The record gives the reactivity of an RNA of 177 nucleotides to 2A3. For 2A3 the reverse transcriptase was SuperScript II with manganese. It was measured as part of the RMDB library OK1LIB. Conditions: 150 mM KOAc, 10 mM MgCl2 and 150 mM bicine (pH 8.5), 24 C. Values cover nucleotides 27 to 126.
RNA sequence: GGGAACGACUCGAGUAGAGUCGAAAAGCAUAUGGUGUGGACUUCCUGGUGCCCGUGAUGGGCUAUAUCUGCCGCAUCUGCCACAAGUUCUAUCACAGCAACUCAGGGGCACAGCUCUCCCACUGCAGGAGGCACUAGACUUCGGUCUAGUGCCUCCAAAAGAAACAACAACAACAAC
Reactivity to 2A3 in 0.01 (KOAc 150mM, MgCl2 10mM, bicine 150mM(pH8.5), 24C), signal-to-noise 1, nucleotides 027 to 126: g080c100a170u060a010u190g110g050u000g020u110g080g010a000c010u190u000c010c050u040g000g000u080g000c000c000c000g010u000g110a300u260g000g010g000c030u000a000u000a000u000c080u000g030c000c000g140c050a000u110c120u140g000c040c040a000c080a040a000g000u010u030c020u080a300u170c180a050c130a050g000c010a000a000c000u050c110a010g020g000g000g010c000a000c060a000g000c000u000c000u000c050c000c000a000c000u000g000c040a040